An RNA of 177 nucleotides, treated with 2A3 and DMS and read out base by base. 2A3 adducts were read by reverse transcription with SuperScript II with manganese. For 2A3, 788 sequencing reads were counted. For DMS the reverse transcriptase was MarathonRT. Conditions: 150 mM KOAc, 10 mM MgCl2 and 150 mM bicine (pH 8.5), 24 C.
RNA sequence: GGGAACGACUCGAGUAGAGUCGAAAAUGCUAUAGAUGUUGCUGCUUCAAAAGCUGCUUUUGACUUUGAGACUGAUCGUUUUGCACAUGACUUCAAUAUAACUAAUGUCAUGCCAGCAGGACCUGCCCACUCCCAAUCGGUUCGCCGAUUGGGAGUGAAAAGAAACAACAACAACAAC
Reactivity to 2A3 in 0.01 (KOAc 150mM, MgCl2 10mM, bicine 150mM(pH8.5), 24C), signal-to-noise 2, nucleotides 027 to 126: u080g000c010u040a040u070a190g020a030u140g080u280u180g060c050u120g060c010u070u050c040a120a120a040a120g020c000u040g070c070u100u070u050u010g070a010c000u110u050u120g060a070g080a050c040u050g010a060u010c020g040u000u030u080u030g020c060a030c000a050u000g020a010c040u060u000c210a300a100u150a080u090a250a200c130u080a110a040u120g000u040c020a000u000g100c020c020a030g000c020a000g000g000a020c040c030u040g000c000c060
Reactivity to DMS in 0.01 (KOAc 150mM, MgCl2 10mM, bicine 150mM(pH8.5), 24C), signal-to-noise 2, nucleotides 027 to 126: u000g010c050u000a080u010a130g000a090u000g040u000u000g000c120u000g000c010u000u000c050a050a130a170a110g010c020u000g020c210u000u000u020u010g020a030c040u010u000u000g030a130g010a130c020u000g000a070u000c090g000u010u000u000u010g010c040a140c000a010u000g010a040c000u000u000c160a090a100u000a090u000a090a100c190u020a130a070u000g010u000c000a010u000g020c060c090a090g000c060a010g000g010a030c030c090u030g000c060c050